[RMDB]
RNA sequence: GGGAACGACUCGAGUAGAGUCGAAAAGGGGUCUCGCUUUUGACGUCGAUAGCUGGAGCAUCGAUCUAUACUGAAGCCUCCACGGUAUAGGGAGCUCCCGAAGCGACGAUAAGCGAGACGGAGGCACCCAAAACAUAGAUGGUUCGCCAUCUAUGAAGAUCCAGCAAUAGUUCGCUAUUGCUGGAUCAAAAGAAACAACAACAACAAC
Reactivity to 2A3 in 0.01 (KOAc 150mM, MgCl2 10mM, bicine 150mM(pH8.5), 24C), signal-to-noise 2, nucleotides 027 to 156: g000g010g080g020u020c000u000c000g030c010u070u080u130u300g300a220c060g000u000c000g010a070u040a050g120c200u170g030g000a000g000c020a020u300c000g000a000u000c000u020a000u000a000c000u010g050a090a020g000c000c000u010c010c010a000c000g000g000u010a000u000a000g000g000g010a000g000c000u000c000c000c000g030a100a050g010c000g010a000c010g070a090u060a240a000g000c000g000a000g000a000c000g000g000a000g010g000c020a050c000c000c010a040a120a030a020c000a000u010a000g020a010u010g030g040u060u060c170g080c070c000a000u010c000u000a000u020g000a030a040
The record gives the reactivity of an RNA of 207 nucleotides to 2A3.